[RMDB]
RNA sequence: GGGAACGACUCGAGUAGAGUCGAAAAGAUAUGGAUGCGAUACGACAUGAAGGCUGUCGGAAACGACAGGUCCUUCAACAGCGUACGCAUCCUAAGUCAAAUCCUUUCUCCUUCGGGAGAAAGGAAAUCAUAAAGAUAACUUCGGUUAUCUUUAUGAAAAAGAAACAACAACAACAAC
Reactivity to DMS in 0.01 (KOAc 150mM, MgCl2 10mM, bicine 150mM(pH8.5), 24C), signal-to-noise 8, nucleotides 027 to 126: g000a010u000a050u010g000g000a020u000g010c010g000a250u000a010c010g010a050c140a180u010g010a020a010g010g000c000u000g010u000c000g010g000a020a010a020c000g020a010c000a010g000g010u010c010c000u000u000c000a140a130c200a160g010c000g010u000a010c010g000c000a000u000c000c000u000a000a070g000u000c010a150a130a180u010c000c000u000u000u000c000u000c000c000u000u020c250g020g000g010a020g010a010a010a010g010g000a000a020a040
Reactivity to 2A3 in 0.01 (KOAc 150mM, MgCl2 10mM, bicine 150mM(pH8.5), 24C), signal-to-noise 6, nucleotides 027 to 126: g000a000u010a000u050g000g000a000u000g020c010g130a190u010a020c010g040a030c150a280u300g000a000a000g010g030c000u000g000u010c000g000g010a020a010a000c010g000a000c000a000g060g220u150c000c000u000u000c010a060a040c100a030g010c010g000u000a000c000g000c000a000u000c000c000u000a010a000g000u000c010a030a020a260u030c000c000u000u000u000c000u010c010c000u060u170c280g210g000g000a000g000a000a000a010g010g000a050a010a010
Notes:
Source: RMDB library TTRDES, as collected in RNAgym. The record gives the reactivity of an RNA of 177 nucleotides to DMS and 2A3. DMS adducts were read by reverse transcription with MarathonRT. Reactivities are rounded to 0.1 and cut off at 0 and 3. The RNA was probed in 150 mM KOAc, 10 mM MgCl2 and 150 mM bicine (pH 8.5) at 24 C.